[RMDB]
RNA sequence: GGGAACGACUCGAGUAGAGUCGAAAAAGCGUAGUGGUACGCCGCUACGCAAGGCGCAUUUGAACUGUAUUGUACGCCUUGCAUAAAGCAAAAGUACUAAAAAAACGUGCCGUUACGACGGCACGAAAAAACAUCCAUUGGUUCGCCAAUGGAUGAAGAACUCACAAACGUUCGCGUUUGUGAGUUCAAAAGAAACAACAACAACAAC
Reactivity to 2A3 in 0.01 (KOAc 150mM, MgCl2 10mM, bicine 150mM(pH8.5), 24C), signal-to-noise 2, nucleotides 027 to 156: a000g000c000g000u000a000g000u000g000g020u020a020c120g040c050c000g000c000u000a000c000g000c000a000a000g000g000c020g010c030a110u060u050u280g200a190a110c100u120g020u190a160u170u090g030u070a010c000g020c000c020u010u010g000c040a080u080a270a130a010g000c000a010a050a030a000g030u070a040c070u080a040a000a000a050a050a000a110c000g000u000g000c000c000g020u020u040a070c300g030a020c000g060g000c000a000c000g000a000a000a000a000a000a000c000a000u000c000c000a000u000u030g000g000u040u000c090g010c150c000a010a000u000g000g000a000u000g010a000a000